[RMDB]
RNA sequence: GGGAACGACUCGAGUAGAGUCGAAAAGCCAGCAAAAUCAGUAAAUGGAGCGGUGGUAUUGGCGUGCAUUACAGCAAGAUCCGUGCGCGUGGUCAAUUGAUUCGCGGCACCAAUGGUCGCUCAAGUGGCAUUAUUCCACAAUUGCGUAUUUGGGAUGCAUAGGAGUACCUUUCGAGGUACUCCUAUGAAAAGAAACAACAACAACAAC
Reactivity to 2A3 in 0.01 (KOAc 150mM, MgCl2 10mM, bicine 150mM(pH8.5), 24C), signal-to-noise 7, nucleotides 027 to 156: g050c020c030a020g080c070a040a060a070a130u170c030a040g100u150a060a130a150u220g060g000a040g020c030g030g010u050g030g040u090a080u040u070g060g010c040g000u050g020c020a040u090u150a140c040a050g040c010a060a050g020a050u060c060c030g000u040g020c100g000c000g020u070g020g020u040c070a150a230u140u230g020a040u100u120c030g000c010g030g000c010a010c010c020a030a120u110g070g010u040c010g010c010u020c040a060a040g030u030g020g000c020a050u070u090a060u200u060c020c010a030c010a080a110u130u110g020c040g050u090a110u060u060u050g050g010g020a040u130g010
Reactivity to DMS in 0.01 (KOAc 150mM, MgCl2 10mM, bicine 150mM(pH8.5), 24C), signal-to-noise 3, nucleotides 027 to 156: g040c040c020a110g060c070a070a030a110a110u000c070a110g000u000a050a110a140u020g000g010a110g020c030g040g030u000g020g040u000a050u000u000g010g020c040g050u000g040c040a090u000u000a170c070a130g020c060a080a100g000a070u010c040c070g050u000g020c040g020c100g040u000g000g020u000c010a140a140u000u020g000a120u000u000c070g020c010g030g010c000a040c020c070a050a060u000g030g020u000c020g000c050u000c060a110a080g040u000g010g000c050a080u000u000a140u000u000c020c020a060c050a060a160u000u000g000c010g020u000a230u000u000u010g010g010g010a180u000g010